The data come from the RNA Mapping Database (RMDB), library TTRDEL. This 177-nucleotide RNA was probed chemically with DMS and 2A3. DMS adducts were read by reverse transcription with MarathonRT. 2A3 adducts were read by reverse transcription with SuperScript II with manganese. For DMS, 7,675 sequencing reads were counted.
RNA sequence: GGGAACGACUCGAGUAGAGUCGAAAAGAUAUGGAGUGUAGGGAGUCCCGGAUCGGAAACGAUCCGAGGACAUCGAUCUACCUCCUAAGUCAAAAUCUUAGUCCGUAGUUCGCUACGGACUAAGAAACAUAUGGUAUUCCUUCGGGAAUACCAUAUGAAAAGAAACAACAACAACAAC
Reactivity to DMS in 0.01 (KOAc 150mM, MgCl2 10mM, bicine 150mM(pH8.5), 24C), signal-to-noise 4, nucleotides 027 to 126: g010a030u000a240u010g000g000a020g010u010g020u000a010g000g000g000a030g030u000c000c000c010g000g000a010u000c010g010g000a060a030a070c000g010a010u000c000c000g000a060g030g010a000c000a070u000c150g000a080u000c000u000a010c010c000u000c010c000u000a000a080g000u000c020a090a070a100a100u000c000u000u000a010g000u000c000c000g010u000a000g000u000u020c230g020c010u000a010c000g010g000a000c000u000a000a000g010a020a090a150
Reactivity to 2A3 in 0.01 (KOAc 150mM, MgCl2 10mM, bicine 150mM(pH8.5), 24C), signal-to-noise 3, nucleotides 027 to 126: g010a010u040a030u090g000g000a020g000u300g020u120a000g000g010g030a030g000u010c010c000c000g000g000a010u000c000g010g000a080a020a010c010g010a000u020c030c000g010a050g010g010a010c010a030u190c020g020a050u000c000u000a000c010c000u000c000c000u000a080a020g040u000c030a070a030a040a300u020c010u000u000a000g000u000c000c010g000u010a000g010u020u120c300g000c170u000a000c000g000g000a000c000u000a000a000g000a000a000a010